[RMDB]
RNA sequence: GGGAACGACUCGAGUAGAGUCGAAAAAGAGCGGUAAGUGGUCUCCAGGCCGGCGGGUAGCAGCAACCGCAAGAACGCGAUGAUGGCCUCGUCGUCGAGCUUCUCCCCGUCGAUCUCGGCGGCGACCCCGAGCUGAGGGAUUCGUCCCUCAGCUCGGAAAAGAAACAACAACAACAAC
Reactivity to 2A3 in 0.01 (KOAc 150mM, MgCl2 10mM, bicine 150mM(pH8.5), 24C), signal-to-noise 1, nucleotides 027 to 126: a000g150a010g000c040g050g060u130a240a040g050u050g160g010u000c000u000c020c030a060g000g000c000c020g030g010c010g000g040g000u060a040g000c030a010g000c000a020a160c030c000g070c020a060a110g070a090a030c080g000c030g080a020u070g010a020u070g040g030c000c020u030c020g010u000c000g030u020c010g000a020g000c040u030u040c020u060c030c000c000c050g050u030c070g020a060u010c050u000c000g000g000c040g000g010c000g000a030c000c000